[RMDB]
RNA sequence: GGGAACGACUCGAGUAGAGUCGAAAAGAAGCACGGCUUGUGUGUGAUCCUUUUGGAUUGCACUGUAUAUCCUACGCUGUGCGAAUGUAGGACCAUUGUGGCGAGAGCCACUUACAGUACAGCUUAUUAUGACGCAUCGCUGUACGAACGAUGCCGACGAGCGCACUAUAUUCGUAUAGUGCGCUCGAAAAGAAACAACAACAACAAC
Reactivity to 2A3 in 0.01 (KOAc 150mM, MgCl2 10mM, bicine 150mM(pH8.5), 24C), signal-to-noise 3, nucleotides 027 to 156: g140a100a000g000c030a010c020g040g000c030u170u120g010u010g000u000g000u000g190a000u020c010c000u140u120u120u300g000g000a000u000u010g020c010a000c000u010g100u040a160u040a030u120c000c050u040a020c060g010c030u020g000u000g010c000g000a040a030u090g020u080a020g000g040a010c040c010a070u010u130g010u000g000g000c020g000a060g010a040g020c000c000a000c010u000u030a000c010a000g020u030a000c000a030g000c010u070u080a030u130u130a100u300g170a090c060g000c040a060u090c040g000c020u020g010u030a000c010g000a070a000c010g000a000u090g000c000c010g020a060
Reactivity to DMS in 0.01 (KOAc 150mM, MgCl2 10mM, bicine 150mM(pH8.5), 24C), signal-to-noise 1, nucleotides 027 to 156: g010a210a190g030c020a010c000g010g000c020u010u000g000u000g030u000g060u010g000a010u000c010c020u000u000u000u000g060g000a020u010u000g020c010a040c000u000g000u020a120u030a100u000c040c020u000a120c080g030c020u030g000u010g040c060g060a150a060u020g000u000a010g000g010a230c090c040a170u000u000g030u020g060g080c000g030a300g010a300g070c000c010a010c000u000u000a040c010a050g000u000a030c050a110g050c050u000u000a220u000u000a010u000g070a220c140g060c060a030u000c060g070c020u000g040u010a100c190g040a010a000c040g000a020u000g010c000c000g020a170